An RNA of 207 nucleotides, treated with 2A3 and read out base by base. Reactivities are given for positions 27 through 156. Conditions: 150 mM KOAc, 10 mM MgCl2 and 150 mM bicine (pH 8.5), 24 C. For 2A3, 449 sequencing reads were counted. As a SHAPE reagent, 2A3 marks flexible, mostly unpaired nucleotides at the ribose 2'-OH.

RNA sequence: GGGAACGACUCGAGUAGAGUCGAAAAUACAAUGUCAUACCACAGUCACAGUAUGCUCUCAAAGUGUGUGAUAUACUUUGCAUUCACAAAAUACUAUUAUACCUUUAAUCAACUUUUUCUAAUCUUGAAAAAUGUAGUUGUGAUAAUACAUAUUAAACACGUGAUUAGCUUUCGAGCUAAUCACGUGAAAAGAAACAACAACAACAAC
Reactivity to 2A3 in 0.01 (KOAc 150mM, MgCl2 10mM, bicine 150mM(pH8.5), 24C), signal-to-noise 2, nucleotides 027 to 156: u170a000c000a000a140u070g090u090c000a030u060a090c030c050a080c070a100g050u080c010a070c010a000g040u040a020u060g010c040u000c020u030c060a040a070a030g120u140g000u020g000u010g180a050u030a000u030a240c020u060u060u170g020c010a060u170u170c010a040c000a020a170a070a150u080a010c020u030a110u110u040a110u080a120c000c000u170u100u170a030a110u180c040a040a060c000u080u020u050u100u000c000u160a110a140u030c040u080u070g060a020a060a060a060a060u120g050u060a060g000u000u040g020u070g030a000u070a130a000u090a050c060a000u300a060u180u300a080a080a050